[RMDB]
The record gives the reactivity of an RNA of 177 nucleotides to DMS and 2A3.
RNA sequence: GGGAACGACUCGAGUAGAGUCGAAAAUCCUCAGGGUUCGCCCUGAGGAAAACGCUCAACUCAUGGAGCCCACGACGGAUCACCAUCGAUUCGACAUGAGAAAAAGAACUUGCUUCGGCAAGUUCAACAUCCAAUGUAGCUUCGGCUACAUUGGAUGAAAAGAAACAACAACAACAAC
Reactivity to DMS in 0.01 (KOAc 150mM, MgCl2 10mM, bicine 150mM(pH8.5), 24C), signal-to-noise 2, nucleotides 027 to 126: u010c000c000u000c000a000g000g010g040u000u020c190g020c000c000c020u000g030a020g010g000a020a010a120a130c230g000c010u000c020a080a140c020u010c000a030u000g000g000a080g020c020c060c080a080c140g000a190c030g010g000a020u000c070a080c220c160a100u010c140g000a040u000u010c010g030a090c020a020u020g000a030g010a120a140a080a150a140g000a000a000c000u000u000g010c000u000u000c190g030g010c000a000a000g010u000u000c000a080a120
Reactivity to 2A3 in 0.01 (KOAc 150mM, MgCl2 10mM, bicine 150mM(pH8.5), 24C), signal-to-noise 2, nucleotides 027 to 126: u020c000c000u000c010a000g020g020g030u040u030c140g090c050c000c000u000g000a010g000g000a000a010a000a010c030g030c010u040c030a010a160c030u000c010a010u030g020g020a020g040c040c030c030a120c030g080a020c030g000g010a010u000c030a020c180c070a160u190c150g010a020u030u030c020g010a020c030a040u030g020a030g110a070a100a010a020a000g000a000a000c000u000u000g020c010u030u050c120g090g000c010a000a000g000u000u000c000a000a000
Source: RMDB library M2PK50, as collected in RNAgym. The DMS profile rests on 1,062 reads.